The record gives the reactivity of an RNA of 207 nucleotides to DMS and 2A3. The 2A3 profile rests on 1,216 reads. DMS (dimethyl sulfate) methylates the pairing face of unpaired adenines and cytosines. The DMS profile rests on 3,767 reads. Values cover nucleotides 27 to 156. The RNA was probed in 150 mM KOAc, 10 mM MgCl2 and 150 mM bicine (pH 8.5) at 24 C. The data come from the RNA Mapping Database (RMDB), library OK3TST.
[RMDB]
RNA sequence: GGGAACGACUCGAGUAGAGUCGAAAAACUGAUGAAAGCGAAACAGGAAAACCGGCUGGAGCGUCAGCUACAGCAACUGAGUUAUGCCCGGGUGUUGAUCCUGGAUGAAAUAGGCUAUCUGCCGAUGAACAGAGAGGAAGCCAGUCUGUUCUUCCGGCUAUUCCUAAAUCUUCGGAUUUAGGAAUAGAAAAGAAACAACAACAACAAC
Reactivity to DMS in 0.01 (KOAc 150mM, MgCl2 10mM, bicine 150mM(pH8.5), 24C), signal-to-noise 2, nucleotides 027 to 156: a090c060u010g010a130u000g000a100a120a100g000c050g020a160a100a090c030a100g020g020a140a040a080a040c010c020g020g030c000u000g000g030a080g070c040g020u000c220a030g020c020u020a070c030a110g010c020a030a050c050u010g000a040g020u000u000a090u000g020c040c020c040g000g000g010u010g010u010u000g010a100u000c010c010u000g030g000a080u010g000a060a070a060u000a100g020g010c010u000a130u020c070u030g030c020c000g030a100u010g000a060a100c040a080g010a070g010a180g020g020a050a100g020c000c030a090g010u000c020u000g010u000u000c040u000u000c020c000g010g000
Reactivity to 2A3 in 0.01 (KOAc 150mM, MgCl2 10mM, bicine 150mM(pH8.5), 24C), signal-to-noise 2, nucleotides 027 to 156: a010c060u070g030a050u050g040a160a040a060g060c070g020a090a020a000c010a030g070g000a070a060a020a000c020c000g060g020c000u020g020g020a020g020c010g080u140c110a030g000c010u040a030c000a010g050c040a000a040c070u090g020a020g040u050u040a030u190g030c000c010c000g040g000g020u050g000u030u090g010a040u010c010c000u020g000g010a000u050g040a020a020a080u080a040g030g000c000u010a020u130c080u130g040c030c000g010a020u050g010a060a010c030a010g040a000g020a010g150g040a060a000g010c030c010a050g050u010c020u020g010u000u010c000u020u030c030c000g000g000